[RMDB]
RNA sequence: GGGAACGACUCGAGUAGAGUCGAAAACUUUCAAAUCCUCAAACACAGCCGUGCCACCAGUACCAAUGUUCGACUCCAGAUCAGGGGCACCUGGCUAUCCGGCCCUGAAAAACCCAUUCUCCAGAUUCGAUUCUCCCGUCUCACCAAAAAGUGCUGGGUAUAGAUCCCUAUUCGUAGGGAUCUAUACAAAAGAAACAACAACAACAAC
Reactivity to DMS in 0.01 (KOAc 150mM, MgCl2 10mM, bicine 150mM(pH8.5), 24C), signal-to-noise 1, nucleotides 027 to 156: c040u010u000u010c020a080a090a050u010c000c020u000c030a090a140a070c080a080c040a140g050c040c020g040u010g010c050c020a040c030c010a080g010u010a040c040c050a040a140u000g010u010u010c020g010a070c000u000c020c100a130g030a110u020c050a140g000g040g040g020c030a030c060c020u000g000g030c060u030a110u000c050c050g000g020c020c000c070u000g010a110a060a040a080a070c060c050c010a200u000u000c020u000c020c000a100g010a200u000u040c000g040a080u010u000c040u000c000c000c020g020u010c040u000c010a100c020c020a040a050a040a120a140g020u020g000c040u020g000g000
Reactivity to 2A3 in 0.01 (KOAc 150mM, MgCl2 10mM, bicine 150mM(pH8.5), 24C), signal-to-noise 3, nucleotides 027 to 156: c040u050u170u160c040a040a070a070u020c000c020u110c040a090a120a040c060a010c030a070g030c030c030g030u030g010c020c030a140c020c000a060g040u070a060c040c020a110a050u120g030u030u050c030g050a050c040u040c040c040a050g010a200u060c040a050g020g010g010g010c040a020c010c020u030g040g000c020u020a050u080c030c040g030g000c030c000c000u040g030a090a030a030a050a050c000c020c000a050u070u030c020u030c030c010a030g020a120u040u060c030g050a040u060u000c040u020c020c000c000g050u000c020u020c040a080c050c000a050a090a070a020a020g070u080g020c050u050g080g030

Conditions: 150 mM KOAc, 10 mM MgCl2 and 150 mM bicine (pH 8.5), 24 C. Chemical mapping of a 207-nucleotide RNA with DMS and 2A3. 2A3 adducts were read by reverse transcription with SuperScript II with manganese. For DMS the reverse transcriptase was MarathonRT. As a SHAPE reagent, 2A3 marks flexible, mostly unpaired nucleotides at the ribose 2'-OH.